[RMDB]
RNA sequence: GGGAACGACUCGAGUAGAGUCGAAAAGAUAUGGACCAGUCCACGACCUGCAUCGAUCUCGGAAACGAGGGAGCAGCGUGGAGCUGGUCCUAAGUCAAAGUGAAGUUCGCUUCGGCGAACUUCACAAGUAACCACCACUGUUCGCAGUGGUGGUUACAAAAGAAACAACAACAACAAC
Reactivity to DMS in 0.01 (KOAc 150mM, MgCl2 10mM, bicine 150mM(pH8.5), 24C), signal-to-noise 2, nucleotides 027 to 126: g010a080u020a300u010g000g000a020c020c010a010g010u000c000c010a000c000g000a150c300c040u000g000c010a290u010c180g000a040u010c000u000c000g000g000a140a100a170c020g010a030g020g000g010a040g000c010a000g000c010g020u020g000g000a020g000c000u000g000g000u000c000c000u000a000a070g000u010c060a110a060a140g000u000g000a020a030g010u000u000c000g040c010u000u030c240g030g000c000g010a000a000c000u000u000c000a000c000a010a070
Reactivity to 2A3 in 0.01 (KOAc 150mM, MgCl2 10mM, bicine 150mM(pH8.5), 24C), signal-to-noise 2, nucleotides 027 to 126: g010a030u060a030u140g000g010a000c020c010a000g000u010c000c000a020c040g110a300c050c010u030g020c010a210u300c140g120a130u020c000u010c010g090g000a140a070a060c020g000a020g000g010g010a010g010c010a000g030c000g000u010g010g020a010g000c000u000g000g000u000c000c000u010a020a010g000u000c050a100a010a020g000u010g000a030a000g000u000u010c010g000c040u060u220c300g070g000c030g000a000a000c010u000u000c000a000c010a010a000